[RMDB]
RNA sequence: GGGAACGACUCGAGUAGAGUCGAAAAUUGCUAACAUCAAGGAUCUUGACGUCAACAUUAACAAAUUCCGUUUACUAGGUAGUGCGACCCUUAGCAACACCAUCGAUGAAGUCUUGGUUUGUGCAGGAUCAACCAUUGUUAUCGGCAGCGCAUUAUCCAUAAGACACCGUUUCGACGGUGUCUUAUGAAAAGAAACAACAACAACAAC
Reactivity to DMS in 0.01 (KOAc 150mM, MgCl2 10mM, bicine 150mM(pH8.5), 24C), signal-to-noise 4, nucleotides 027 to 156: u000u010g020c000u000a070a070c040a040u000c020a070a090g030g000a090u010c060u000u000g010a060c020g030u000c040a030a040c020a060u000u000a110a180c080a070a100a240u010u000c030c030g000u010u000u010a100c110u010a100g030g030u000a030g020u000g020c020g030a070c050c030c020u010u010a070g010c020a040a040c080a050c020c010a060u000c060g010a140u000g010a100a120g000u000c070u000u010g020g020u000u000u000g020u010g000c080a120g000g000a090u000c030a050a060c050c010a200u000u000g000u010u000a040u000c030g010g030c030a060g020c070g020c050a080u000u000a120u000c010
Reactivity to 2A3 in 0.01 (KOAc 150mM, MgCl2 10mM, bicine 150mM(pH8.5), 24C), signal-to-noise 7, nucleotides 027 to 156: u090u050g020c030u030a060a020c020a070u070c050a030a060g090g010a080u080c030u040u060g030a040c040g050u060c050a040a030c040a150u100u170a070a060c060a090a080a090u140u040c030c020g030u040u050u050a100c090u050a040g000g040u010a010g010u010g040c010g030a060c000c010c000u030u040a020g000c010a010a040c030a030c060c010a050u070c070g060a080u090g120a080a040g050u030c030u050u050g070g000u040u070u100g060u050g020c040a020g040g010a040u070c040a030a040c040c020a050u040u090g040u060u030a060u060c010g030g000c030a030g030c020g000c030a010u050u050a030u100c000